[RMDB]
RNA sequence: GGGAACGACUCGAGUAGAGUCGAAAAGAUAUGGACACGAACUACAUUAGUGUGAACGAAGAACUCGGAAACGAGGGAGUUCAUGCUAAUGCGUGUCCUAAGUCAAAGCUGCACUUCGGUGCAGCAACAUUCAAUUCUGGUUCGCCAGAAUUGAAUGAAAAGAAACAACAACAACAAC
Reactivity to DMS in 0.01 (KOAc 150mM, MgCl2 10mM, bicine 150mM(pH8.5), 24C), signal-to-noise 5, nucleotides 027 to 126: g000a040u000a300u000g000g010a000c000a000c000g010a080a060c080u010a270c010a020u000u000a000g010u000g050u000g000a000a010c000g000a080a140g000a100a210c000u000c000g000g000a100a090a180c010g010a010g000g000g000a060g000u000u000c000a000u000g000c000u010a010a000u000g000c010g000u000g010u010c000c000u000a020a040g000u010c030a110a100a150g010c000u000g000c000a000c000u000u010c240g020g010u000g000c000a000g000c010a020a060
Reactivity to 2A3 in 0.01 (KOAc 150mM, MgCl2 10mM, bicine 150mM(pH8.5), 24C), signal-to-noise 6, nucleotides 027 to 126: g010a010u090a050u150g010g000a000c000a000c010g060a120a050c110u260a040c300a020u000u010a010g010u000g000u010g010a010a000c020g150a300a110g020a070a020c000u000c000g020g030a070a060a060c010g000a010g010g000g010a040g000u000u010c000a000u020g000c010u000a000a000u000g010c010g000u000g000u010c000c000u010a080a010g010u010c020a030a100a070g010c010u000g000c010a000c010u070u100c300g130g000u010g000c000a000g000c000a000a000